[RMDB]
RNA sequence: GGGAACGACUCGAGUAGAGUCGAAAAGCAGCGGCCGUCGGUGCAGGAGUGGGCGGAGGCACCGAGGUGGAUGCGCAGCAGAGCACCACUCAGCCGCAAGAACACGAUAAUCCCGGCCGGGCGCGGGGACCCAUAUCAUAUUCGUAUGAUAUGGGUCAAAAGAAACAACAACAACAAC
Reactivity to 2A3 in 0.01 (KOAc 150mM, MgCl2 10mM, bicine 150mM(pH8.5), 24C), signal-to-noise 4, nucleotides 027 to 126: g040c070a000g030c000g040g090c030c000g120u070c020g000g000u050g030c070a040g030g090a120g040u180g020g000g060c090g020g030a040g050g000c020a030c060c090g010a030g000g050u050g020g030a230u040g000c040g000c030a050g110c020a040g070a010g070c010a020c000c000a030c010u040c030a030g000c000c000g000c020a020a020g040a030a010c050a000c070g040a040u100a140a070u110c010c030c000g010g040c070c060g070g020g000c070g010c010g040g020g040
Reactivity to DMS in 0.01 (KOAc 150mM, MgCl2 10mM, bicine 150mM(pH8.5), 24C), signal-to-noise 6, nucleotides 027 to 126: g010c110a130g030c010g010g020c010c080g000u000c030g000g020u000g010c070a090g010g000a260g020u000g000g000g010c080g000g000a210g000g000c020a040c060c040g020a090g000g010u000g000g000a120u000g010c030g000c060a170g010c160a100g010a140g010c020a060c020c030a030c010u000c120a130g010c000c010g010c040a110a090g010a070a080c070a030c070g000a120u010a080a140u000c060c010c000g000g010c050c040g000g010g000c070g000c060g000g000g000